[RMDB]
Background: Conditions: 150 mM KOAc, 10 mM MgCl2 and 150 mM bicine (pH 8.5), 24 C. Structure probing data (DMS and 2A3) for a 177-nucleotide construct. It was measured as part of the RMDB library OK2TST. Values cover nucleotides 27 to 126. For DMS, 58,494 sequencing reads were counted. 2A3 adducts were read by reverse transcription with SuperScript II with manganese. For DMS the reverse transcriptase was MarathonRT.

RNA sequence: GGGAACGACUCGAGUAGAGUCGAAAACUAGAGUACAUGGUACACUGCACGAUCGCUCGGUACCGAGUAUCCAUGUACAUGACAGUCAUCUCUGCACAUGCGAGUACGAGUGAUCUCUAGGCAUCGAAUUUAUCUUACAAUUCGUUGUAAGAUAAAUAAAAGAAACAACAACAACAAC
Reactivity to DMS in 0.01 (KOAc 150mM, MgCl2 10mM, bicine 150mM(pH8.5), 24C), signal-to-noise 9, nucleotides 027 to 126: c020u000a050g010a120g020u000a030c030a060u000g000g010u000a040c040a130c140u000g010c090a100c130g010a080u000c080g010c050u000c030g020g020u000a040c050c070g000a110g010u000a060u010c150c010a010u000g010u000a020c010a060u010g010a160c170a060g000u010c160a110u010c070u000c020u010g010c040a050c060a050u000g010c080g000a100g010u000a030c030g000a040g010u000g000a050u000c020u000c080u000a050g000g010c090a090u010c110g010a100
Reactivity to 2A3 in 0.01 (KOAc 150mM, MgCl2 10mM, bicine 150mM(pH8.5), 24C), signal-to-noise 9, nucleotides 027 to 126: c020u020a020g010a020g100u020a010c040a090u080g040g000u030a020c060a040c080u110g020c080a050c140g050a060u040c040g010c050u000c020g070g060u070a070c040c030g010a020g010u030a040u030c020c000a010u010g000u020a010c010a070u100g060a020c040a030g090u090c020a130u040c060u000c020u070g020c050a060c010a110u140g060c050g050a060g040u030a020c020g010a010g010u020g040a050u000c020u000c030u060a060g070g000c030a070u080c060g030a040